Background: An RNA of 177 nucleotides, treated with 2A3 and DMS and read out base by base. Reactivities are given for positions 27 through 126. DMS adducts were read by reverse transcription with MarathonRT. Source: RMDB library OK1LIB, as collected in RNAgym.
[RMDB]
RNA sequence: GGGAACGACUCGAGUAGAGUCGAAAAUAACAGUGUCUUGGCGUGAGAACGUCAAGUAACUAGCAAUCACAGUAUGCUAGUUACUUUGUGUGAAAACACAAAGAUGCUGUUUAACUGUGAUUGAUACGAACUUGAGGUAUUUCGAUAUCUCAAGUUCAAAAGAAACAACAACAACAAC
Reactivity to 2A3 in 0.01 (KOAc 150mM, MgCl2 10mM, bicine 150mM(pH8.5), 24C), signal-to-noise 9, nucleotides 027 to 126: u090a000a000c000a000g010u010g010u020c000u010u020g000g000c000g010u020g030a090g030a080a020c000g000u000c000a000a000g000u000a000a000c000u000a000g000c000a010a020u080c000a000c000a010g010u030a020u070g000c000u000a000g000u000u000a000c000u000u000u000g000u000g000u010g090a050a030a050a010c000a000c000a000a000a000g000a000u000g000c000u000g000u000u000u010a010a000c000u000g000u000g030a070u090u200g080a080u090a150c120
Reactivity to DMS in 0.01 (KOAc 150mM, MgCl2 10mM, bicine 150mM(pH8.5), 24C), signal-to-noise 9, nucleotides 027 to 126: u020a000a010c000a010g010u000g010u000c010u000u000g000g010c010g000u010g000a270g000a160a020c000g020u000c000a010a010g000u000a000a000c000u000a010g000c010a040a090u010c000a010c010a010g040u000a280u010g000c000u000a000g000u010u000a000c000u000u000u010g020u000g010u000g000a140a080a150a020c000a000c000a010a020a010g000a010u000g000c000u000g000u000u000u000a050a030c000u000g000u000g000a270u050u030g000a130u030a100c240